[RMDB]
RNA sequence: GGGAACGACUCGAGUAGAGUCGAAAAGGGGUCACGAUCGGGCGUGGUGGAGAAGUGUGGCUGAAGCCUCCACGGCCACCUUCGUUGAAACCACGUCUCUAGCGUGUCGUGACGGAGGCACCCAAAACUCGAGUGGGUCUUCGGACCCACUCGAGAAGGGUCAUUGUAAGUUCGCUUACAAUGACCCAAAAGAAACAACAACAACAAC
Reactivity to 2A3 in 0.01 (KOAc 150mM, MgCl2 10mM, bicine 150mM(pH8.5), 24C), signal-to-noise 1, nucleotides 027 to 156: g040g000g030g010u010c000a010c000g040a070u230c170g060g020g000c000g000u000g020g020u010g000g090a010g000a010a000g040u100g000u000g190g040c000u020g040a050a000g000c000c000u000c000c010a020c060g000g000c010c000a000c000c000u010u010c010g070u100u070g000a040a020a010c010c060a000c000g000u030c010u010c000u020a040g030c060g070u090g050u020c030g010u010g000a050c050g000g000a000g000g010c040a020c000c010c030a050a100a070a140c010u020c000g010a010g000u000g000g030g000u000c000u060u070c210g030g030a000c000c030c040a000c000u000c000g000a010g000a000a010